[RMDB]
RNA sequence: GGGAACGACUCGAGUAGAGUCGAAAAAUAAGUGCUAUUGCAGCUUAUUCUGUUGCCCCUAUUGUAGGCACUGCUCUACCGAUAAAGAAAUUCAUAAGCUGCACUUGAGCAUCUGCAAAAAAAGGAAAUCUAAGAGCCAAUUCGUUGGCUCUUAGAUAAAAGAAACAACAACAACAAC
Reactivity to DMS in 0.01 (KOAc 150mM, MgCl2 10mM, bicine 150mM(pH8.5), 24C), signal-to-noise 2, nucleotides 027 to 126: a110u000a080a100g010u010g000c010u010a050u000u000g000c000a000g000c000u000u000a020u000u010c050u000g000u000u000g020c050c040c020c030u000a030u010u000g010u000a010g010g010c000a210c230u020g010c080u000c000u000a010c050c150g010a040u020a010a030a050g000a220a030a030u000u000c160a010u000a010a010g020c000u000g000c000a030c220u000u000g000a020g050c010a020u010c080u010g000c180a000a000a020a050a080a050a140g010g030a140a090
Record summary
Conditions: 150 mM KOAc, 10 mM MgCl2 and 150 mM bicine (pH 8.5), 24 C. An RNA of 177 nucleotides, treated with DMS and read out base by base. The DMS profile rests on 1,147 reads.